[RMDB]
RNA sequence: GGGAACGACUCGAGUAGAGUCGAAAAGGCUUGGGGAGUAGCCUGCUUUCGGAAACGAAAGCGCCUGUAUCAACAUACUCGGCGAAAGCCGUGGUGCAGGACCGAAAGGUCUGGCGAGACCAGGCCAAACAGGGGAAUUUGUUCGCAAAUUCCCCUGCAGAUCACUAUUGUUCGCAAUAGUGAUCUGAAAAGAAACAACAACAACAAC
Reactivity to 2A3 in 0.01 (KOAc 150mM, MgCl2 10mM, bicine 150mM(pH8.5), 24C), signal-to-noise 3, nucleotides 027 to 156: g000g000c010u010u000g010g010g000g000a070g010u010a010g010c000c000u000g020c020u000u010u000c010g030g030a100a130a090c010g010a040a040a000g010c010g230c010c000u000g010u010a020u020c010a000a040c010a030u160a070c030u010c020g000g000c010g050a120a040a000g000c000c010g010u000g000g000u000g000c000a010g010g000a010c000c000g050a080a040a010g010g020u020c030u020g010g000c000g000a010g000a000c010c000a000g000g000c000c000a000a000a000c000a000g000g010g000g010a000a000u010u010u020g040u070u130c210g010c140a010a000a000u000u000c000c000c010c000u000g010
Reactivity to DMS in 0.01 (KOAc 150mM, MgCl2 10mM, bicine 150mM(pH8.5), 24C), signal-to-noise 2, nucleotides 027 to 156: g010g020c000u010u000g010g040g040g000a260g000u000a150g020c000c020u010g050c000u000u000u000c000g010g000a170a140a300c020g010a010a000a030g020c020g010c120c000u020g040u010a050u000c020a090a170c000a050u010a040c190u000c040g020g010c020g020a140a120a290g050c000c020g030u000g000g010u000g010c010a020g010g020a120c010c020g010a070a160a190g010g020u000c030u000g010g020c030g000a170g010a220c000c000a020g030g010c010c000a030a050a170c020a040g020g000g030g000a050a040u000u000u000g010u000u010c300g010c010a030a030a070u000u000c000c000c020c000u010g010

An RNA of 207 nucleotides, treated with 2A3 and DMS and read out base by base. Reactivities are given for positions 27 through 156. For 2A3, 5,035 sequencing reads were counted. The data come from the RNA Mapping Database (RMDB), library PDB130.